[RMDB]
RNA sequence: GGGAACGACUCGAGUAGAGUCGAAAAGGAACGUUGUUCGCAACGUUCCGUGCCGGAAACGGAGAUGACGAUCGCGCGCAUGUCGGGAAACCGUAAACGCGAGCAUCAUGGUGUUCGCACCAUGAAAUGUAUUAGUGAACUUCGGUUCACUAAUACAAAAAGAAACAACAACAACAAC
Reactivity to DMS in 0.01 (KOAc 150mM, MgCl2 10mM, bicine 150mM(pH8.5), 24C), signal-to-noise 9, nucleotides 027 to 126: g000g010a000a000c000g020u000u000g010u000u020c190g020c000a010a010c000g000u000u010c000c000g020u010g020c020c010g000g000a090a090a170c020g010g010a110g010a090u010g020a080c110g000a080u000c050g000c010g000c040g010c100a200u010g010u010c010g000g000g000a110a070a200c010c010g010u000a040a100a080c050g010c000g010a040g010c160a150u000c000a000u000g010g010u000g010u000u010c200g020c000a010c000c000a010u000g000a020a090a120
Reactivity to 2A3 in 0.01 (KOAc 150mM, MgCl2 10mM, bicine 150mM(pH8.5), 24C), signal-to-noise 6, nucleotides 027 to 126: g000g000a010a000c010g000u000u010g030u060u090c230g000c100a010a000c000g000u000u000c000c000g010u040g010c000c010g040g030a080a060a030c030g020g010a100g020a080u140g070a050c070g040a070u070c050g010c000g000c000g000c080a040u140g090u170c000g020g000g020a080a060a040c000c020g010u050a050a070a040c030g010c000g000a020g040c020a060u030c000a000u000g010g000u020g030u040u050c210g000c060a000c000c000a010u010g000a020a030a020

The record gives the reactivity of an RNA of 177 nucleotides to DMS and 2A3. High 2A3 reactivity points to a flexible backbone, as in loops and unpaired stretches. For DMS, 17,001 sequencing reads were counted. The reactions ran in a buffer of 150 mM KOAc, 10 mM MgCl2 and 150 mM bicine (pH 8.5), at 24 C. Source: RMDB library M2PK50, as collected in RNAgym.